Source information:
An RNA of 207 nucleotides, treated with 2A3 and read out base by base. The 2A3 profile rests on 525 reads. Reactivities are given for positions 27 through 156. Source: RMDB library ARCHII, as collected in RNAgym.

RNA sequence: GGGAACGACUCGAGUAGAGUCGAAAACAGGCGUAGACCCGCAUUGACUGCGAUUCGUAGGUUACGUCUACGUAAAAACGUUACAGUUAAAUAUAACUGCAAAUAACAAAAAUUCUUACGCAUUAGCUGCUUAAUUUAGCGCAUGCGUUGCUCUUGAGGUAUAUCCGGAGUUCGCUCCGGAUAUACCAAAAGAAACAACAACAACAAC
Reactivity to 2A3 in 0.01 (KOAc 150mM, MgCl2 10mM, bicine 150mM(pH8.5), 24C), signal-to-noise 2, nucleotides 027 to 156: c020a000g090g000c010g050u060a060g050a240c060c000c000g090c050a110u030u130g190a120c110u090g010c020g070a110u190u190c070g080u240a070g000g030u000u040a010c000g000u010c020u030a010c000g040u050a000a050a110a050a000c030g010u040u010a000c000a000g010u020u020a000a270a230u220a130u070a100a020c010u010g000c040a090a000a070u240a110a040c050a050a090a050a000a060u270u060c040u140u130a000c000g010c010a040u070u080a030g020c030u090g000c020u130u090a080a120u290u240u230a040g000c000g020c000a000u030g000c000g010u010u080g010c020u000c010u040u000g000a010